The data come from the RNA Mapping Database (RMDB), library RNAMAK.
The record gives the reactivity of an RNA of 207 nucleotides to DMS and 2A3.
The DMS profile rests on 3,155 reads.
For 2A3 the reverse transcriptase was SuperScript II with manganese.
For DMS the reverse transcriptase was MarathonRT.
[RMDB]
RNA sequence: GGGAACGACUCGAGUAGAGUCGAAAACGCUGGGUAUUGGCAAGGAUGUACGGGAGCUGAAGCGCGCACGGCGAAGAACGUACAUACCCUUGAGAUACCUGUGCUGAAGCGCGCACGGCAACCGAAAGGUGCGAAAAGCGAAUUCUUCGGAAUUCGCCACAAAAAAAGAGUUCGCUCUUUUUUUGUGAAAAGAAACAACAACAACAAC
Reactivity to DMS in 0.01 (KOAc 150mM, MgCl2 10mM, bicine 150mM(pH8.5), 24C), signal-to-noise 2, nucleotides 027 to 156: c050g000c010u000g000g030g040u010a000u000u020g030g000c010a080a050g010g020a100u000g020u000a010c000g010g010g010a180g030c000u000g010a030a070g030c010g020c010g030c030a300c030g010g010c000g010a050a120g000a170a150c000g020u010a000c010a090u000a120c140c010c060u000u000g010a300g000a070u000a030c010c000u000g010u000g010c030u030g000a170a050g020c010g060c020g000c010a190c070g000g000c000a100a140c030c040g000a100a160a170g000g000u000g000c020g000a040a070a100a180g030c000g000a020a000u000u000c000u000u020c220g030g000a030a000u000u000c020g010c000
Reactivity to 2A3 in 0.01 (KOAc 150mM, MgCl2 10mM, bicine 150mM(pH8.5), 24C), signal-to-noise 4, nucleotides 027 to 156: c020g000c030u060g000g010g020u010a020u020u070g290g070c010a030a010g010g000a010u010g000u000a000c000g020g010g010a030g000c000u030g030a250a070g020c020g000c010g010c010a020c010g010g000c040g050a100a000g020a030a000c010g020u010a000c010a010u070a100c060c020c000u010u020g030a040g000a040u020a000c000c000u000g040u040g000c020u040g030a140a030g000c010g000c000g000c010a010c010g030g000c030a050a020c010c000g060a120a070a020g040g000u030g000c030g040a090a070a000a020g000c000g000a000a000u010u000c030u070u130c200g040g010a000a000u000u010c000g000c000